About this RNA
Chemical mapping of a 207-nucleotide RNA with DMS and 2A3. Conditions: 150 mM KOAc, 10 mM MgCl2 and 150 mM bicine (pH 8.5), 24 C. For DMS, 2,032 sequencing reads were counted. Reactivities are given for positions 27 through 156. The data come from the RNA Mapping Database (RMDB), library RNAMAK.
[RMDB]
RNA sequence: GGGAACGACUCGAGUAGAGUCGAAAAACUAGCUUCGGCUAGUCUUCAGGGGUCUACUUGAUUAGGGCCUUUUGACGAUCUGAAGCCUCCACGGAUCGAUAAGGAACUACCCUAAGAGAGUAGACGGAGGCACCCAUUGACAUCUCUUCGGAGAUAAUUUGCGUUAUAUGUUCGCAUAUAACGCAAAAAAAGAAACAACAACAACAAC
Reactivity to DMS in 0.01 (KOAc 150mM, MgCl2 10mM, bicine 150mM(pH8.5), 24C), signal-to-noise 2, nucleotides 027 to 156: a040c000u000a000g010c020u010u020c300g010g000c000u000a030g010u010c020u010u010c070a140g030g020g020g010u000c010u000a040c000u000u000g020a300u000u010a000g000g030g000c020c160u000u000u000u000g030a300c180g010a030u010c000u010g030a050a050g030c080c010u000c000c000a300c030g000g000a040u010c000g030a120u000a050a100g000g010a070a070c090u010a210c000c000c010u030a050a060g000a300g010a070g010u010a040g010a030c010g010g020a040g100g030c000a160c000c020c010a300u000u000g000a130c100a070u010c020u000c010u020u000c260g010g020a020g010a030u020a030a160
Reactivity to 2A3 in 0.01 (KOAc 150mM, MgCl2 10mM, bicine 150mM(pH8.5), 24C), signal-to-noise 2, nucleotides 027 to 156: a000c000u000a000g020c020u050u080c260g150g000c010u020a020g000u000c030u100u060c060a070g060g000g020g070u000c000u000a000c000u020u050g030a040u020u020a000g000g010g070c020c000u010u030u040u100g160a060c020g000a000u000c000u000g080a130a040g060c020c030u000c010c010a030c020g030g000a010u020c030g010a030u040a060a020g020g010a090a050c090u160a060c270c010c020u000a010a000g020a000g010a000g000u010a000g000a000c020g000g000a010g000g030c030a030c010c000c020a070u100u260g100a090c030a020u080c000u010c000u010u090c290g140g000a000g000a010u120a050a130